[RMDB]
RNA sequence: GGGAACGACUCGAGUAGAGUCGAAAAUCUAAACCUUAUGGCUGGUGCAGCCGCCCGCCAGUGCUUGCGGGUGUGCACAGGCCUACAUCUAGGGUCAUAGGUGGGGAGCGGAUCCUGUCCAUCCUCAGCUUGGAAGUGCGUUCGCGCACUUCCAAGCAAAAGAAACAACAACAACAAC
Reactivity to 2A3 in 0.01 (KOAc 150mM, MgCl2 10mM, bicine 150mM(pH8.5), 24C), signal-to-noise 1, nucleotides 027 to 126: u130c030u040a070a100a000c000c050u060u040a080u080g000g000c000u040g070g000u000g030c000a010g050c090c000g000c030c030c000g070c070c030a180g050u140g210c100u050u010g000c000g000g060g000u000g050u040g000c000a040c000a000g000g000c000c010u010a010c010a040u040c120u100a020g020g010g020u050c030a100u180a140g000g070u030g000g000g000g010a050g040c200g010g000a140u040c000c100u060g080u000c020c000a010u000c000c000u010c010a020
Structure probing data (2A3) for a 177-nucleotide construct. The reactions ran in a buffer of 150 mM KOAc, 10 mM MgCl2 and 150 mM bicine (pH 8.5), at 24 C.